Structure probing data (DMS and 2A3) for a 207-nucleotide construct. It was measured as part of the RMDB library M2RFPK. Reactivities are given for positions 27 through 156. DMS adducts were read by reverse transcription with MarathonRT.
RNA sequence: GGGAACGACUCGAGUAGAGUCGAAAAAUGGCGAGUGCAUGGGGAACUACAUCUGUGUCGCGAGUUCGAUUCUCGCCAGGGCCUGGUCCUGUAGCUCAGUUGGUAGAGCAAGCUGUUCCCCGGACACAAAAUCCAGCUAGGUUCGCCUAGCUGGAAACACCAAACUAAAGUUCGCUUUAGUUUGGUGAAAAGAAACAACAACAACAAC
Reactivity to DMS in 0.01 (KOAc 150mM, MgCl2 10mM, bicine 150mM(pH8.5), 24C), signal-to-noise 4, nucleotides 027 to 156: a100u000g010g010c050g030a170g030u000g010c050a150u010g000g010g000g020a060a030c010u010a090c070a060u010c060u000g020u000g050u010c030g010c010g010a070g010u010u000c030g010a300u010u000c010u000c000g020c010c030a090g020g010g020c030c110u010g060g000u000c020c010u000g010u000a050g020c010u000c010a130g000u000u020g010g000u000a050g020a030g030c020a180a170g010c040u000g000u010u000c000c010c000c020g000g000a140c050a060c040a030a070a090a080u000c000c000a020g000c000u000a010g010g010u000u010c280g020c020c000u000a000g000c000u000g000g000a000a020a050
Reactivity to 2A3 in 0.01 (KOAc 150mM, MgCl2 10mM, bicine 150mM(pH8.5), 24C), signal-to-noise 5, nucleotides 027 to 156: a020u140g090g020c080g050a080g030u030g000c040a100u190g010g010g010g010a010a010c030u080a040c090a120u120c030u050g060u040g050u190c000g010c000g010a000g000u000u010c000g000a000u000u020c000u000c010g000c000c000a000g000g000g000c030c300u190g070g050u040c000c000u000g020u010a000g010c000u010c010a070g020u220u150g140g120u200a000g000a000g000c000a010a000g020c040u040g000u000u010c000c000c000c000g030g000a010c000a000c020a010a120a000a010u000c000c000a000g010c000u000a000g010g020u040u050c140g060c040c000u000a000g000c000u000g000g000a000a000a000